[RMDB]
RNA sequence: GGGAACGACUCGAGUAGAGUCGAAAAGAUAUGGACCAUUCCAUGGAGCUCAGUGGUCGGAAACGACCACGAGCUAUGAAGUGGAUGGUCCUAAGUCAAAAGACCUCACGGUUCGCCGUGAGGUCAAUCAUUUGCAUAACUUCGGUUAUGCAAAUGAAAAAGAAACAACAACAACAAC
Reactivity to DMS in 0.01 (KOAc 150mM, MgCl2 10mM, bicine 150mM(pH8.5), 24C), signal-to-noise 2, nucleotides 027 to 126: g000a020u000a150u000g000g000a000c000c000a010u000u000c000c000a010u000g020g000a150g030c000u000c000a120g060u010g000g000u000c000g020g000a020a060a060c000g010a040c000c000a020c000g000a010g010c030u010a050u000g010a200a190g010u000g000g010a010u000g000g000u000c000c000u000a010a070g010u000c000a100a090a160a190g020a020c000c000u000c010a010c000g000g000u000u010c260g040c000c000g010u000g000a010g020g000u000c000a000a070
Reactivity to 2A3 in 0.01 (KOAc 150mM, MgCl2 10mM, bicine 150mM(pH8.5), 24C), signal-to-noise 2, nucleotides 027 to 126: g010a010u030a000u040g000g000a000c010c010a020u300u160c000c010a010u150g070g140a200g040c010u000c110a100g020u000g000g000u010c000g000g000a010a010a000c000g000a000c010c010a010c020g000a000g000c010u060a250u220g070a040a000g000u010g000g020a000u000g010g020u010c000c000u000a000a000g000u000c010a000a040a000a160g000a010c000c000u010c030a000c000g020g190u100u120c300g020c130c000g000u010g000a030g040g010u000c000a010a000